[RMDB]
RNA sequence: GGGAACGACUCGAGUAGAGUCGAAAAGGCGCCAUUCCUCUGGUUUACUUAUAAGCAAUCACCAGCACCUGAUAAGGCUACAGUACCUUUUUGUUGCUGUUUACAUGUAUGAAAGCCAAUUCGAGCCUGUAGGGGAUAGGUUCGCCUAUCCCCUACAAAAAGAAACAACAACAACAAC
Reactivity to 2A3 in 0.01 (KOAc 150mM, MgCl2 10mM, bicine 150mM(pH8.5), 24C), signal-to-noise 1, nucleotides 027 to 126: g020g000c010g000c030c000a060u030u030c020c050u030c030u030g020g110u080u020u050a100c040u150u050a050u030a260a020g030c030a060a050u050c010a020c100c010a000g030c010a020c000c010u090g020a170u060a130a080g020g000c030u090a050c030a030g070u060a060c000c000u000u040u030u000u060g020u060u020g000c020u000g100u010u040u110a100c040a060u100g120u140a070u060g020a040a000a000g030c000c020a020a090u100u080c020g000a020g010c000c090
Reactivity to DMS in 0.01 (KOAc 150mM, MgCl2 10mM, bicine 150mM(pH8.5), 24C), signal-to-noise 3, nucleotides 027 to 126: g020g000c070g020c050c060a200u010u010c040c010u010c110u000g000g010u000u000u000a080c090u010u010a050u000a090a090g010c080a040a070u000c060a070c100c040a050g020c050a030c060c050u000g020a070u000a040a070g010g000c030u010a040c170a110g010u000a090c030c000u000u000u000u010u000g020u010u000g000c010u000g010u000u000u020a060c140a070u000g020u000a050u000g010a080a090a090g000c020c020a060a150u000u000c050g020a090g000c080c020